This 177-nucleotide RNA was probed chemically with DMS. It was measured as part of the RMDB library TTRINS.
RNA sequence: GGGAACGACUCGAGUAGAGUCGAAAAGAUAUGGAUGAGGCUACCCACCCUACAAGCAGCGAAGAACAAAUUCCUAUCGGAAACGAUAGGAAUUUGGGAGCUGCUGUAGGAGGCCUCAUCCUAAGUCCUAUGACUUCUGGUUCGCCAGAAGUCAUAGAAAAGAAACAACAACAACAAC
Reactivity to DMS in 0.01 (KOAc 150mM, MgCl2 10mM, bicine 150mM(pH8.5), 24C), signal-to-noise 1, nucleotides 027 to 126: g010a230u020a150u010g020g000a000u000g010a000g020g000c010u000a130c020c080c130a300c040c040c000u020a010c010a040a100g040c000a010g010c020g010a150a110g000a110a210c000a000a000a010u000u000c000c000u000a000u000c010g000g000a080a070a180c000g010a010u000a020g000g010a000a000u000u000u000g010g030g040a100g010c000u000g010c000u010g000u000a000g000g000a070g020g010c000c000u000c000a000u000c000c010u030a030a050g010u040c110